[RMDB]
This 207-nucleotide RNA was probed chemically with 2A3 and DMS. It was measured as part of the RMDB library OK3TST. For DMS the reverse transcriptase was MarathonRT. For 2A3 the reverse transcriptase was SuperScript II with manganese. The reactions ran in a buffer of 150 mM KOAc, 10 mM MgCl2 and 150 mM bicine (pH 8.5), at 24 C. Reactivities are rounded to 0.1 and cut off at 0 and 3.

RNA sequence: GGGAACGACUCGAGUAGAGUCGAAAAUCACCUGGAAAAUGGCCCUGGAGCAGGCAUGUGACUGACUCGUUCUGCAAGGCCUCCAGACAGCUAAAUGAAGAUGGCUUCUAGCUAAGAAACAGAGGGGUUCAUACACAUGCAAAGAUAACUUCCCCAAUACUACUCCACUAUUCGUAGUGGAGUAGUAAAAAGAAACAACAACAACAAC
Reactivity to 2A3 in 0.01 (KOAc 150mM, MgCl2 10mM, bicine 150mM(pH8.5), 24C), signal-to-noise 5, nucleotides 027 to 156: u040c020a040c040c010u040g000g050a050a110a070a140u150g030g000c010c010c020u030g070g020a050g020c030a030g050g020c000a020u030g020u020g050a080c080u020g020a070c000u020c060g110u210u050c030u020g030c020a070a070g020g010c010c000u000c020c000a030g040a100c070a010g020c030u100a100a150a110u200g060a070a060g090a120u180g030g020c000u030u010c020u060a030g000c010u080a130a020g070a090a120a010c040a040g030a070g040g040g020g000u080u090c030a020u070a130c020a000c000a020u020g010c040a100a100a000g050a060u140a090a040c020u040u050c000c010c010c000a010a030
Reactivity to DMS in 0.01 (KOAc 150mM, MgCl2 10mM, bicine 150mM(pH8.5), 24C), signal-to-noise 3, nucleotides 027 to 156: u010c020a120c060c010u000g020g010a070a100a090a140u010g000g030c000c030c010u000g020g000a060g040c050a070g010g000c000a050u000g060u000g010a210c120u000g010a080c020u000c030g040u000u000c030u020g030c030a090a190g010g010c020c010u010c030c010a060g020a140c050a050g000c010u000a070a120a140u000g010a130a120g020a090u010g020g010c000u000u000c020u000a050g000c030u000a050a100g020a160a100a060c060a060g000a080g010g000g020g010u020u010c050a090u000a140c020a030c020a040u000g010c060a090a090a090g030a160u000a080a100c050u000u000c000c000c010c020a040a300